Source information:
The record gives the reactivity of an RNA of 177 nucleotides to DMS and 2A3. As a SHAPE reagent, 2A3 marks flexible, mostly unpaired nucleotides at the ribose 2'-OH. The 2A3 profile rests on 3,565 reads. DMS adducts were read by reverse transcription with MarathonRT. The RNA was probed in 150 mM KOAc, 10 mM MgCl2 and 150 mM bicine (pH 8.5) at 24 C.
RNA sequence: GGGAACGACUCGAGUAGAGUCGAAAAGGACGGAGCUGGCUGGACCCACCAGCAAGGUGGCCGAGCCGGGGUGUUGCUAAGCUACUGAGGACCCCUCGCCCGAGAGGAGCAUCGCCCGCCGCCACCGCACAAUGUAGGGUUUCGACCCUACAUUGUGAAAAGAAACAACAACAACAAC
Reactivity to DMS in 0.01 (KOAc 150mM, MgCl2 10mM, bicine 150mM(pH8.5), 24C), signal-to-noise 4, nucleotides 027 to 126: g010g010a080c130g030g000a150g000c030u010g020g000c010u000g010g020a150c040c020c030a280c020c010a050g000c050a170a040g010g030u000g000g010c100c070g020a080g010c060c140g010g030g000g020u000g010u020u000g010c030u000a070a120g000c060u000a080c170u020g000a150g000g000a160c070c050c030c020u000c070g000c040c040c060g000a110g000a050g010g010a060g030c010a030u010c030g020c000c010c010g000c040c080g000c010c010a030c020c020g000
Reactivity to 2A3 in 0.01 (KOAc 150mM, MgCl2 10mM, bicine 150mM(pH8.5), 24C), signal-to-noise 3, nucleotides 027 to 126: g100g030a040c120g050g030a060g030c010u020g030g000c010u060g090g040a110c020c000c010a030c000c010a000g010c010a010a020g000g000u020g000g000c170c090g040a070g000c090c090g020g020g010g000u080g010u020u020g010c010u040a060a050g040c040u100a180c070u150g070a120g020g070a120c040c020c000c020u010c030g040c020c060c040g090a060g010a010g040g030a010g000c010a000u020c020g010c010c000c010g020c000c020g000c010c000a000c000c020g000